[RMDB]
RNA sequence: GGGAACGACUCGAGUAGAGUCGAAAAGUGUCAUCGUCUUGCUGCCACUGCCAGGGAAUGCCUUCUUCCUCAAUCCCUAGUAACACUUGGUGCCAGACCGCCUCGGGUGUUGGCGAGGUCAGGCUGAGAGCCCUAGAAUAUUCGUAUUCUAGGGCUCAAAAGAAACAACAACAACAAC
Reactivity to DMS in 0.01 (KOAc 150mM, MgCl2 10mM, bicine 150mM(pH8.5), 24C), signal-to-noise 5, nucleotides 027 to 126: g010u010g010u000c030a050u000c060g010u010c050u010u000g010c060u000g010c050c030a060c080u000g000c050c050a100g010g010g010a080a090u000g000c050c010u010u000c090u000u010c010c020u010c080a100a130u000c020c010c010u010a100g010u010a060a060c100a090c110u000u000g010g010u000g000c010c020a080g000a070c050c070g010c020c000u000c040g020g000g020u000g010u000u000g010g000c040g010a040g010g010u000c060a070g030g010c020u000g000a200
Reactivity to 2A3 in 0.01 (KOAc 150mM, MgCl2 10mM, bicine 150mM(pH8.5), 24C), signal-to-noise 1, nucleotides 027 to 126: g080u050g070u090c030a020u080c030g090u000c020u060u090g000c010u040g070c020c010a040c020u050g040c020c000a020g000g020g000a080a020u060g030c000c010u030u020c010u080u040c010c020u020c010a050a110u090c000c010c000u020a020g030u050a080a020c010a020c090u020u070g040g040u040g050c030c000a020g040a080c010c000g060c030c010u050c020g100g000g040u060g000u100u070g040g030c020g050a020g000g060u060c060a060g000g010c010u000g020a070

Chemical mapping of a 177-nucleotide RNA with DMS and 2A3.
The RNA was probed in 150 mM KOAc, 10 mM MgCl2 and 150 mM bicine (pH 8.5) at 24 C.
DMS adducts were read by reverse transcription with MarathonRT.
The 2A3 profile rests on 1,531 reads.